[RMDB]
RNA sequence: GGGAACGACUCGAGUAGAGUCGAAAAGAUAUGGAGUCAGGUCUGACAUGCCUGUGUAAACGUUUGACGCUUAUCGGAAACGAUAAGCCGAGUUUACGCAGGCAACAGCAGACCUGACUCCUAAGUCCAAGUAGUCAUGGUUCGCCAUGACUACUUGAAAAGAAACAACAACAACAAC
Reactivity to DMS in 0.01 (KOAc 150mM, MgCl2 10mM, bicine 150mM(pH8.5), 24C), signal-to-noise 7, nucleotides 027 to 126: g000a080u010a300u010g010g010a020g000u000c000a010g010g000u000c000u000g000a070c100a300u000g010c000c000u000g010u010g000u000a000a010a010c000g000u010u010u020g010a250c300g000c010u000u000a010u000c010g010g010a140a140a300c000g010a010u000a000a000g000c000c010g010a050g010u000u000u000a000c000g010c000a010g000g010c010a000a010c200a140g010c000a000g010a010c000c000u000g000a000c000u000c000c000u000a000a060g010u000c040
Reactivity to 2A3 in 0.01 (KOAc 150mM, MgCl2 10mM, bicine 150mM(pH8.5), 24C), signal-to-noise 1, nucleotides 027 to 126: g060a020u140a080u180g000g000a000g020u020c000a020g000g000u000c000u020g050a220c070a120u130g010c000c000u000g010u000g010u000a010a000a020c060g070u060u280u300g110a050c050g000c000u000u010a010u010c000g020g000a080a060a060c000g010a000u010a000a020g000c000c010g020a010g000u000u000u000a010c000g010c000a010g000g000c000a010a000c000a000g000c000a000g000a010c000c030u010g000a000c010u010c000c000u000a000a010g010u020c000